[RMDB]
RNA sequence: GGGAACGACUCGAGUAGAGUCGAAAAUCUGCACUUGCUUUCUCUCUAGAUGGAUAAGUGCCAUUCUCUUUGUGAAGGUGGCAUCUGUCCUCAGUCUCACUCAAGGAUGGUCUCCUAUUUCCCACAGUUGUGAAAGAAGUCAGUUAUCCAUUAGUUAUACGUCAUAGUGAUUCGUCACUAUGACGUAAAAAGAAACAACAACAACAAC
Reactivity to 2A3 in 0.01 (KOAc 150mM, MgCl2 10mM, bicine 150mM(pH8.5), 24C), signal-to-noise 2, nucleotides 027 to 156: u030c010u040g020c060a020c030u010u260g110c010u000u000u020c020u000c000u000c050u080a070g000a150u100g060g000a040u080a180a080g010u010g000c000c000a020u220u080c020u000c000u020u190u140g190u090g080a150a020g050g020u020g010g000c000a060u040c110u080g040u000c010c010u020c000a010g020u000c020u000c080a040c000u030c020a060a020g060g010a020u060g020g050u030c030u060c040c010u050a140u030u060u010c020c010c000a040c000a040g130u150u070g040u020g070a050a040a020g000a050a000g040u010c000a000g010u010u020a120u130c030c050a020u080u120a060g100u140u240a080
Reactivity to DMS in 0.01 (KOAc 150mM, MgCl2 10mM, bicine 150mM(pH8.5), 24C), signal-to-noise 1, nucleotides 027 to 156: u010c010u000g010c080a070c080u000u000g000c030u000u010u000c020u000c030u000c060u000a100g010a090u000g020g020a090u010a050a050g030u000g010c010c000a030u020u000c020u000c030u020u000u010g040u010g040a070a040g030g070u000g000g020c030a070u000c020u000g000u000c010c020u000c000a140g030u000c050u010c050a070c040u000c040a090a090g040g000a110u020g030g040u000c000u000c010c000u000a160u000u000u000c020c040c000a110c080a070g010u000u000g000u010g000a120a040a060g010a060a140g020u000c030a060g030u000u000a110u000c020c030a100u000u000a120g000u010u000a220
Chemical mapping of a 207-nucleotide RNA with 2A3 and DMS. The reactions ran in a buffer of 150 mM KOAc, 10 mM MgCl2 and 150 mM bicine (pH 8.5), at 24 C. DMS (dimethyl sulfate) methylates the pairing face of unpaired adenines and cytosines.